Chemical mapping of a 177-nucleotide RNA with 2A3. The reactions ran in a buffer of 150 mM KOAc, 10 mM MgCl2 and 150 mM bicine (pH 8.5), at 24 C.
RNA sequence: GGGAACGACUCGAGUAGAGUCGAAAAGAUAUGGAAGUUAGUAGCCGAUAAGCUAGUAUCGGAAACGAUACAUAGCUUUUGACGGCUCUAACUUCCUAAGUCAAAUGGCUGAUGUUCGCAUCAGCCAGCAGUGGCACAAGUUCGCUUGUGCCACUGCAAAAGAAACAACAACAACAAC
Reactivity to 2A3 in 0.01 (KOAc 150mM, MgCl2 10mM, bicine 150mM(pH8.5), 24C), signal-to-noise 1, nucleotides 027 to 126: g000a000u040a000u090g000g000a000a000g010u020u020a060g070u270a000g140c030c120g120a290u160a300a050g010c000u000a020g010u000a010u000c010g050g000a000a000a000c020g000a010u000a000c030a090u010a000g000c000u050u010u020u070g220a090c000g020g000c000u030c000u000a010a000c000u000u000c000c000u000a000a000g020u010c000a030a030a190u120g010g070c030u010g010a010u000g040u140u090c300g020c110a000u030c030a000g000c010c010a010